[RMDB]
RNA sequence: GGGAACGACUCGAGUAGAGUCGAAAAUCAAUCUGGGCGUCCAAAACUCUCAGACGGAGUUCGUCGACGCGGCAGACGAGCACGACGCCGACGCCGUGCUCGUCUCCUCGCUGUACGGGCACGCCAAUCGUACGCAUAGUUUCGACUAUGCGUACGAAAAAGAAACAACAACAACAAC
Reactivity to DMS in 0.01 (KOAc 150mM, MgCl2 10mM, bicine 150mM(pH8.5), 24C), signal-to-noise 2, nucleotides 027 to 126: u010c080a030a140u000c070u000g000g030g020c010g000u000c030c300a100a060a100a100c030u010c030u010c040a110g030a090c090g020g000a110g000u020u000c030g000u000c000g000a130c010g000c060g010g000c170a040g000a000c050g000a010g010c050a080c050g000a030c030g000c200c070g050a090c150g020c020c020g000u020g020c010u030c010g030u020c000u040c000c000u000c000g000c000u020g000u030a000c000g010g010g000c040a040c020g000c000c050a160a150
Reactivity to 2A3 in 0.01 (KOAc 150mM, MgCl2 10mM, bicine 150mM(pH8.5), 24C), signal-to-noise 2, nucleotides 027 to 126: u120c020a010a040u020c070u070g010g030g000c010g030u000c050c030a020a040a100a110c010u030c010u030c020a040g040a170c070g030g000a120g020u020u050c050g000u000c020g020a020c000g000c000g010g000c040a000g000a010c000g000a010g000c000a010c020g090a020c070g160c200c140g100a130c090g000c000c000g000u000g000c010u010c000g000u000c000u000c000c000u000c000g000c000u010g040u110a000c000g000g000g000c080a000c040g020c020c010a020a080